[RMDB]
RNA sequence: GGGAACGACUCGAGUAGAGUCGAAAAGGAGUCGCAUUGAGAGGAUUCCACUACGCUGCCUCUAUUAUUAUACCGUAAAUCUCUUUAAAUUCUGGAACUAAUUACGUAGAGGAUAUGUCUCAAUUUGCUAAAGUGCUAUUUUCGAAUAGCACUUUAGAAAAGAAACAACAACAACAAC
Reactivity to 2A3 in 0.01 (KOAc 150mM, MgCl2 10mM, bicine 150mM(pH8.5), 24C), signal-to-noise 9, nucleotides 027 to 126: g040g000a020g010u020c020g010c120a050u060u080g050a040g000a020g090g040a010u030u020c020c010a030c020u060a030c060g080c090u070g040c010c010u010c010u000a030u050u010a020u040u040a060u070a080c010c010g040u050a070a130a210u070c070u020c010u080u180u170a120a190a110u210u070c070u140g030g010a030a030c050u030a080a070u090u050a060c090g020u020a010g010a010g020g010a030u050a030u170g050u000c000u000c010a040a100u060u050u170g040
Reactivity to DMS in 0.01 (KOAc 150mM, MgCl2 10mM, bicine 150mM(pH8.5), 24C), signal-to-noise 6, nucleotides 027 to 126: g000g020a040g010u000c030g010c110a050u000u010g010a080g010a050g000g000a110u000u020c010c010a140c050u000a040c060g020c100u010g000c030c010u000c010u000a030u010u010a040u020u000a050u020a200c060c020g000u020a070a090a100u020c060u010c070u010u010u030a050a050a100u020u010c050u010g010g000a070a110c180u010a030a040u010u020a050c090g010u000a010g000a060g000g000a070u030a050u010g010u000c010u000c010a030a040u010u030u010g010